[RMDB]
RNA sequence: GGGAACGACUCGAGUAGAGUCGAAAAAUAUGUGUUCCUAUUCAAACAAUGCAAUUCCUAAAUGGUAGAAGAUGUUGCGAAGCCAGUACCGCCUGGCGAUGAAAUGGCGGACGAAUUAGCAACAAAGUUACGUCUAUCGGUUCGCCGAUAGACGUAAAAAAGAAACAACAACAACAAC
Reactivity to DMS in 0.01 (KOAc 150mM, MgCl2 10mM, bicine 150mM(pH8.5), 24C), signal-to-noise 3, nucleotides 027 to 126: a130u000a110u080g010u000g000u000u030c050c050u000a180u020u090c130a040a130a040c240a030a020u000g000c130a060a130u020u000c000c000u000a050a080a250u010g000g010u000a080g000a120a050g010a120u010g030u000u000g000c010g000a110a040g000c060c010a080g010u000a100c000c000g000c040c000u000g000g020c190g010a090u010g000a050a070a150u040g050g030c020g050g000a040c000g030a000a000u010u000a300g000c040a020a010c030a030a070a090g010
Reactivity to 2A3 in 0.01 (KOAc 150mM, MgCl2 10mM, bicine 150mM(pH8.5), 24C), signal-to-noise 2, nucleotides 027 to 126: a000u180a090u050g110u000g000u020u060c010c000u050a090u050u220c140a020a110a040c000a000a000u060g040c000a030a080u070u100c000c000u210a200a120a120u100g050g000u040a030g020a110a000g120a110u080g000u010u000g010c030g010a020a100g010c000c000a040g060u150a300c020c000g000c000c000u030g180g080c120g050a030u100g080a010a010a110u060g000g000c000g000g050a000c000g010a030a040u060u000a000g000c000a000a020c000a000a120a000g100